Background:
This 177-nucleotide RNA was probed chemically with 2A3 and DMS. For 2A3, 1,400 sequencing reads were counted. 2A3 adducts were read by reverse transcription with SuperScript II with manganese.

RNA sequence: GGGAACGACUCGAGUAGAGUCGAAAAGGGAGCGAGUUCGCUCGCUCCCAAACCCGAUGAAGCGGCACUUACGGAGCUUCAUACAUCUAAGAAGUGCUAUAAAAAGCGGUAGCUUCGGCUACCGCAACGAUAUGGCAAACUUCGGUUUGCCAUAUCGAAAAGAAACAACAACAACAAC
Reactivity to 2A3 in 0.01 (KOAc 150mM, MgCl2 10mM, bicine 150mM(pH8.5), 24C), signal-to-noise 1, nucleotides 027 to 126: g000g000g000a000g020c010g000a000g000u010u020c070g010c060u000c000g000c010u050c010c010c000a000a000a000c000c000c020g000a090u110g050a090a030g110c100g070g030c030a020c040u070u090a050c140g130g040a030g000c010u040u010c000a000u040a050c020a020u000c020u100a140a000g070a130a000g060u020g000c050u010a030u110a290a120a020a030a010g030c000g000g000u000a010g000c000u070u040c250g000g000c010u000a000c000c000g030c010a010a010
Reactivity to DMS in 0.01 (KOAc 150mM, MgCl2 10mM, bicine 150mM(pH8.5), 24C), signal-to-noise 2, nucleotides 027 to 126: g040g020g010a010g030c000g010a020g010u000u000c220g030c000u000c000g010c010u000c000c000c000a010a010a040c010c000c010g020a090u020g000a030a050g000c030g000g030c020a030c020u000u010a300c250g000g000a170g020c020u000u000c090a080u020a100c210a090u020c090u000a100a100g010a080a040g000u000g000c040u000a070u000a050a050a080a140a040g000c000g020g030u000a000g020c000u000u020c220g030g000c000u000a000c010c000g000c000a000a000
The reactions ran in a buffer of 150 mM KOAc, 10 mM MgCl2 and 150 mM bicine (pH 8.5), at 24 C.